[RMDB]
RNA sequence: GGGAACGACUCGAGUAGAGUCGAAAACAAUUUAAGCAGAGAUUUGCAGAACAACACAACAUGCAUUGCGUGUUUGUGGAGUUUAGCAUAUUACUUUGAGUUAAUCGGCGUGUUCCACGCAGGCUUUAAGGAGCGAAGCAUUCGUGCUUCGCUCCUUAAAAGAAACAACAACAACAAC
Reactivity to 2A3 in 0.01 (KOAc 150mM, MgCl2 10mM, bicine 150mM(pH8.5), 24C), signal-to-noise 1, nucleotides 027 to 126: c000a030a040u070u070u170a000a030g030c030a000g080a000g000a000u000u000u000g000c000a000g030a000a000c000a000a000c000a000c000a040a000c000a000u000g040c180a270u100u300g010c040g020u070g030u030u050u080g000u000g000g000a000g000u000u000u000a050g060c050a000u000a000u100u090a100c030u040u030u060g070a100g050u100u030a170a030u150c000g030g000c000g030u000g030u040u070c050c000a000c000g020c000a000g000g130c050u040u000u000
Conditions: 150 mM KOAc, 10 mM MgCl2 and 150 mM bicine (pH 8.5), 24 C. This 177-nucleotide RNA was probed chemically with 2A3. For 2A3, 451 sequencing reads were counted. Reactivities are given for positions 27 through 126.